Description: Source: RMDB library M2RFOK, as collected in RNAgym. This 207-nucleotide RNA was probed chemically with 2A3. For 2A3 the reverse transcriptase was SuperScript II with manganese. Conditions: 150 mM KOAc, 10 mM MgCl2 and 150 mM bicine (pH 8.5), 24 C.
[RMDB]
RNA sequence: GGGAACGACUCGAGUAGAGUCGAAAACCUCACUACAUUUUACUGUUCCUAAAGAAUUUGUGACAGGUACAGUAAAACGUAUUGCAAGGUUUAUCAGUUCCUAUAAACAGGUAAAUAACAAUUUAUGAAAAGCAAAGACUGUUCGCAGUCUUUGCAACUCGGUACAGAAGUUCGCUUCUGUACCGAGAAAAGAAACAACAACAACAAC
Reactivity to 2A3 in 0.01 (KOAc 150mM, MgCl2 10mM, bicine 150mM(pH8.5), 24C), signal-to-noise 3, nucleotides 027 to 156: c000c000u000c000a000c010u010a000c000a030u000u010u000u000a020c000u010g040u040u070c020c010u100a130a180a070g140a210a300u270u290u260g150u110g030a090c130a050g000g000u010a000c000a000g000u000a000a000a000a000c000g000u000a000u000u010g010c090a050a060g010g000u000u000u040a120u080c000a030g010u000u000c000c000u020a070u190a120a070a030c060a020g030g100u130a070a050a090u200a090a080c040a070a100u110u180u140a090u140g070a080a020a000a030g020c010a000a000a000g000a000c000u010g010u050u120c160g000c120a000g000u000c000u010u000u000g000c010a000a000